[RMDB]
RNA sequence: GGGAACGACUCGAGUAGAGUCGAAAACUGUUUAUAUGAUAAUUUUUCUGCUUACAUUGCGUGUUCCGCUUUUAAUGAAAUGCUUAACAACAGACUCACACGUGGAGUUAUUGCACAGAUAUAUUCUGCACUUAAACAUGACGAAACGCAAAUUCAGUCUCCGUACAGGAUUCGUCCUGUACGGAGAAAAAGAAACAACAACAACAAC
Reactivity to 2A3 in 0.01 (KOAc 150mM, MgCl2 10mM, bicine 150mM(pH8.5), 24C), signal-to-noise 1, nucleotides 027 to 156: c000u040g110u080u210u100a300u030a130u130g080a150u120a250a210u220u090u000u000u040c090u040g000c000u000u040a070c010a070u130u000g000c000g000u040g150u110u000c080c000g090c090u040u050u070u050a160a180u150g030a080a040a110u120g000c000u090u000a090a000c010a000a000c000a000g070a110c000u000c040a030c000a000c150g190u300g050g030a030g000u030u030a050u020u190g000c000a000c010a000g010a080u030a000u030a080u300u000c050u040g000c000a070c040u030u050a040a080a020c040a040u120g080a010c010g030a030a000a010c020g010c000a000a000a130u010u010c030a000g030
The record gives the reactivity of an RNA of 207 nucleotides to 2A3. Reactivities are given for positions 27 through 156.